[RMDB]
Source: RMDB library M2RFPK, as collected in RNAgym. Chemical mapping of a 207-nucleotide RNA with DMS and 2A3. For DMS the reverse transcriptase was MarathonRT.
RNA sequence: GGGAACGACUCGAGUAGAGUCGAAAAUUUAACGCUGUUUUAUUGGCGCAAAGGUUUACGGAUAAACAACUAAUAAUUAAACCCUUUGUGUGCGAAACGUGGUUGUUUAACGUACUCUUUAAUCGCUUUGGGGAUGUGUCCUUCGGGACACAUCCAAUGAGUCUAAUUUGUUCGCAAAUUAGACUCAAAAAGAAACAACAACAACAAC
Reactivity to DMS in 0.01 (KOAc 150mM, MgCl2 10mM, bicine 150mM(pH8.5), 24C), signal-to-noise 1, nucleotides 027 to 156: u000u000u000a060a160c060g000c000u010g060u000u000u010u000a120u020u000g010g000c010g000c080a090a080a150g030g020u000u000u000a040c020g030g050a220u000a030a020a060c010a020a060c000u000a110a090u000a080a090u010u000a080a140a080c010c000c060u040u000u000g020u000g040u000g070c050g010a120a040a140c110g010u000g010g010u000u000g030u000u000u000a020a100c030g020u010a080c070u000c030u000u000u000a060a090u010c030g000c060u000u000u000g000g010g050g040a010u010g020u000g030u010c000c010u020u010c300g040g020g000a000c000a010c000a000u000c000c010a020a040
Reactivity to 2A3 in 0.01 (KOAc 150mM, MgCl2 10mM, bicine 150mM(pH8.5), 24C), signal-to-noise 2, nucleotides 027 to 156: u120u090u100a050a000c040g000c020u020g140u080u060u020u030a150u110u150g020g000c010g050c010a060a010a000g040g000u060u050u040a010c000g030g000a080u090a100a020a020c010a020a000c030u080a030a130u070a090a010u140u060a060a070a070c030c000c000u080u130u170g160u070g020u070g070c070g020a130a020a000c160g030u020g010g040u020u000g020u010u040u010a040a000c010g010u050a040c020u000c020u050u130u090a170a120u050c030g010c050u100u130u160g030g050g000g000a000u000g010u000g010u000c000c000u000u020c190g010g010g000a000c000a000c000a000u010c000c000a000a010
For 2A3, 737 sequencing reads were counted.